[RMDB]
Source information
An RNA of 177 nucleotides, treated with 2A3 and DMS and read out base by base. Conditions: 150 mM KOAc, 10 mM MgCl2 and 150 mM bicine (pH 8.5), 24 C.

RNA sequence: GGGAACGACUCGAGUAGAGUCGAAAACACGAGGACCAUAGAGCAUAGUCUUGGGAUCUCGUAUUGUUAAGAGAAACUGCCCAAUGCAGCUUCGUCUUGCUGUGCAACGAUAUUAGGGCAUGUAGCAACACACUAUGUAGUUCGCUACAUAGUGUGUAAAAGAAACAACAACAACAAC
Reactivity to 2A3 in 0.01 (KOAc 150mM, MgCl2 10mM, bicine 150mM(pH8.5), 24C), signal-to-noise 7, nucleotides 027 to 126: c060a000c000g010a010g000g010a000c000c010a030u220a110g010a010g060c150a190u180a110g110u020c000u010u010g010g020g070a170u030c000u000c010g000u000a090u010u260g050u040u060a070a020g080a010g050a070a130a020c040u020g000c000c010c000a010a010u100g000c000a000g000c010u070u060c030g210u030c070u050u070g000c000u010g010u030g020c020a080a050c030g010a030u020a020u100u170a070g010g000g010c040a020u110g030u030a020g020c050a030
Reactivity to DMS in 0.01 (KOAc 150mM, MgCl2 10mM, bicine 150mM(pH8.5), 24C), signal-to-noise 9, nucleotides 027 to 126: c110a040c000g010a020g010g000a080c010c000a020u050a020g010a050g010c250a130u040a130g000u010c010u000u010g000g000g000a140u010c000u000c010g010u000a070u010u010g020u000u010a080a090g010a150g000a070a060a040c040u000g020c000c060c090a080a090u030g000c040a020g000c040u020u020c120g000u030c100u010u010g010c000u000g000u000g010c090a060a110c190g000a070u020a040u010u010a070g000g000g000c010a000u010g000u000a030g010c050a060
DMS adducts were read by reverse transcription with MarathonRT.
Reactivities are rounded to 0.1 and cut off at 0 and 3.
Source: RMDB library OK1LIB, as collected in RNAgym.
2A3 adducts were read by reverse transcription with SuperScript II with manganese.